[RMDB]
RNA sequence: GGGAACGACUCGAGUAGAGUCGAAAAACAGGCAGUGUUUGCUACACUCCUAUAGAUGAGAUACCCUAUAAGAGUUUCUCUGAUAGUGGUUGCAUUCUUCCAUCUGAGUGCACUAUGUUUAGGGAUGUAACAGUGCGCUUCGGCGCACUGAAAAGAAACAACAACAACAAC
Reactivity to DMS in 0.01 (KOAc 150mM, MgCl2 10mM, bicine 150mM(pH8.5), 24C), signal-to-noise 3, nucleotides 027 to 129: a000c250a160g000g030c020a040g020u000g020u000u000u000g040c220u010a130c090a000c020u050c000c040u020a150u010a060g010a000u030g010a080g000a090u020a110c040c030c010u000a000u040a040a020g020a000g000u070u030u020c020u020c020u020g040a090u020a030g000u020g010g030u020u020g080c040a060u010u010c050u010u020c150c010a100u000c130u020g040a000g050u000g000c000a040c050u000a030u050g000u070u000u000a030g030g060g000a060u010g070u070a050a070
Reactivity to 2A3 in 0.01 (KOAc 150mM, MgCl2 10mM, bicine 150mM(pH8.5), 24C), signal-to-noise 4, nucleotides 027 to 129: a000c070a010g010g050c040a010g020u020g010u010u160u090g040c000u060a020c030a000c000u020c020c000u010a030u060a050g130a060u060g030a000g020a090u130a120c030c000c000u080a090u060a160a080g100a000g020u000u050u000c020u000c000u000g070a030u050a030g040u020g080g000u060u180g000c000a000u010u040c000u150u110c050c030a150u000c050u100g000a020g010u020g000c000a020c010u010a000u050g060u020u090u080a010g010g050g000a000u060g000u030a070a000